[RMDB]
RNA sequence: GGGAACGACUCGAGUAGAGUCGAAAAUCGUGGCGCCUUGUGACCCCGGGCCCCUGCCGCCUGCAAGUCGGAAAUUGCGCUGUGCUCCUGUGCUACGGCCUGUGGCUGGACUGCCUGCUGCUGCCCAAUCAGCGUCUUAGUUCGCUAAGACGCUGAUAAAAGAAACAACAACAACAAC
Reactivity to 2A3 in 0.01 (KOAc 150mM, MgCl2 10mM, bicine 150mM(pH8.5), 24C), signal-to-noise 3, nucleotides 027 to 126: u110c020g010u070g050g010c020g040c060c000u050u070g080u070g080a160c000c000c030c000g030g020g000c000c000c030c000u040g030c000c000g030c000c000u010g070c060a080a060g020u090c010g130g010a070a070a130u110u090g040c030g010c000u050g060u090g060c010u020c000c010u060g040u060g040c020u050a070c080g050g030c000c000u030g020u040g070g000c000u020g020g040a080c040u060g010c000c000u020g000c000u010g000c000u000g010c030c010c010a000
Reactivity to DMS in 0.01 (KOAc 150mM, MgCl2 10mM, bicine 150mM(pH8.5), 24C), signal-to-noise 1, nucleotides 027 to 126: u000c040g000u000g000g030c160g010c090c020u060u000g030u020g010a090c020c020c020c050g010g050g000c000c000c000c000u000g040c060c050g000c020c020u020g000c050a120a070g030u000c060g020g000a180a120a070u020u000g000c060g030c010u010g050u000g000c010u000c030c020u020g030u020g010c020u010a080c170g000g000c010c020u020g010u030g020g000c010u010g000g030a080c060u000g000c020c000u000g010c030u010g000c080u030g000c010c020c000a150